[RMDB]
RNA sequence: GGGAACGACUCGAGUAGAGUCGAAAACUACAUAAAUUCGUUUAUGUAGCAUCGGGGACGCGCAGACUCCCCGUCAGACGGCUCUAGCCUUCGAAGCUCUGCACUCAACAGCUUUCGAGCUGUUGAAUUCGUACGCUAUGUUCGCAUAGCGUACGAAAAAAGAAACAACAACAACAAC
Reactivity to DMS in 0.01 (KOAc 150mM, MgCl2 10mM, bicine 150mM(pH8.5), 24C), signal-to-noise 2, nucleotides 027 to 126: c000u000a010c000a000u010a000a010a030u000u000c200g000u000u000u000a000u000g010u000a010g010c150a070u010c010g010g020g010g000a020c200g030c130g020c010a020g000a010c010u000c000c000c000c000g000u000c120a010g000a040c050g010g000c010u000c210u010a090g000c000c000u000u000c020g000a020a020g000c050u000c000u000g000c020a300c230u000c000a000a010c000a010g000c000u000u030u000c160g000a030g010c000u000g000u000u000g000a010a090
Reactivity to 2A3 in 0.01 (KOAc 150mM, MgCl2 10mM, bicine 150mM(pH8.5), 24C), signal-to-noise 2, nucleotides 027 to 126: c000u000a000c000a000u020a010a010a010u060u060c110g040u060u000u000a010u020g010u000a000g020c030a130u150c020g000g010g000g000a000c090g080c000g000c250a000g000a030c000u000c000c040c000c000g000u000c000a000g000a020c030g010g050c010u030c140u250a060g010c030c000u000u000c000g000a010a000g030c060u000c000u010g030c010a020c040u010c010a010a010c010a000g030c000u100u090u160c230g140a000g000c010u000g000u000u000g020a000a030